RNA sequence: GGGAACGACUCGAGUAGAGUCGAAAACCUGGGGAAGGAACAUUCCAGGCAGAGCAAAUAGCAGUGCAAAGGCCCUGGCGGGGGGCGGACAUGCUGUUAGGGUACAAGCAAUGAGGGUGGAGGAGUGUACUAACACUUUGUUCGCAAAGUGUUAGUAAAAAGAAACAACAACAACAAC
Reactivity to DMS in 0.01 (KOAc 150mM, MgCl2 10mM, bicine 150mM(pH8.5), 24C), signal-to-noise 4, nucleotides 027 to 126: c020c010u000g010g010g020g010a150a100g000g010a080a080c080a130u000u010c030c030a080g000g020c070a060g010a200g000c070a060a060a080u000a090g010c040a070g000u010g010c080a060a130a220g000g000c030c020c020u000g000g020c070g000g020g000g000g000g010c080g000g000a150c140a070u010g010c040u000g000u000u000a080g000g000g000u000a070c130a070a090g010c100a050a070u010g000a100g000g000g010u000g000g010a100g010g010a100g010u000g010
Reactivity to 2A3 in 0.01 (KOAc 150mM, MgCl2 10mM, bicine 150mM(pH8.5), 24C), signal-to-noise 1, nucleotides 027 to 126: c000c010u030g010g000g000g000a100a080g040g020a090a040c010a070u090u030c020c000a010g000g000c020a010g030a030g060c040a020a060a130u090a080g000c030a040g070u030g050c000a110a060a090g100g020c010c010c000u030g050g040c040g020g070g020g000g000g010c000g000g010a010c030a030u090g040c020u020g050u100u050a100g040g000g000u070a030c040a080a060g030c000a030a080u130g030a050g060g040g030u110g000g000a020g010g000a050g020u070g000
An RNA of 177 nucleotides, treated with DMS and 2A3 and read out base by base.
The reactions ran in a buffer of 150 mM KOAc, 10 mM MgCl2 and 150 mM bicine (pH 8.5), at 24 C.
For 2A3 the reverse transcriptase was SuperScript II with manganese.
DMS (dimethyl sulfate) methylates the pairing face of unpaired adenines and cytosines.
The data come from the RNA Mapping Database (RMDB), library OK2TRN.